[RMDB]
Structure probing data (DMS and 2A3) for a 207-nucleotide construct. DMS adducts were read by reverse transcription with MarathonRT. For DMS, 2,181 sequencing reads were counted. It was measured as part of the RMDB library OK3TST. As a SHAPE reagent, 2A3 marks flexible, mostly unpaired nucleotides at the ribose 2'-OH.
RNA sequence: GGGAACGACUCGAGUAGAGUCGAAAAGAGAGGUUAGCGUAGAUGCAGACGUUGGGAUAGAGGCUGUUAUAGUCGAAUACCAUAACGUUGUUUUCGAAGGUCUUCUGUUUGGGUAGGAAAACCUUCCCACCGAUGUACGGAUACCGCGUACGCGAGAAACGACUCUUAGGUUCGCCUAAGAGUCGUUAAAAGAAACAACAACAACAAC
Reactivity to DMS in 0.01 (KOAc 150mM, MgCl2 10mM, bicine 150mM(pH8.5), 24C), signal-to-noise 1, nucleotides 027 to 156: g010a120g000a110g000g020u010u000a100g000c030g040u010a120g030a080u010g000c040a040g020a040c060g000u000u020g010g000g060a100u010a100g000a300g040g040c060u000g000u010u030a100u000a050g070u020c020g000a120a130u020a070c000c070a090u000a040a070c020g010u000u000g010u000u020u010u000c050g010a030a110g040g010u020c020u010u010c030u020g010u000u000u010g040g000g000u000a230g010g000a040a040a010a030c010c000u000u000c000c000c030a150c120c060g020a160u000g000u000a060c030g010g020a170u020a120c060c050g010c000g010u000a010c020g010c030g010a190g030a080
Reactivity to 2A3 in 0.01 (KOAc 150mM, MgCl2 10mM, bicine 150mM(pH8.5), 24C), signal-to-noise 2, nucleotides 027 to 156: g060a000g010a000g030g070u070u210a030g060c030g010u020a010g000a060u050g050c040a000g030a090c020g000u040u060g010g020g020a040u050a040g170a050g060g000c030u070g090u300u230a250u120a160g060u000c030g000a020a050u100a120c060c050a090u060a150a020c010g000u000u030g020u010u200u010u080c070g000a030a010g030g000u000c020u020u000c010u030g120u060u040u090g030g060g010u070a090g020g120a000a150a000a000c000c010u020u000c000c000c000a000c030c000g060a170u100g000u030a000c010g000g070a130u100a190c000c100g070c000g030u000a000c000g000c010g000a050g060a090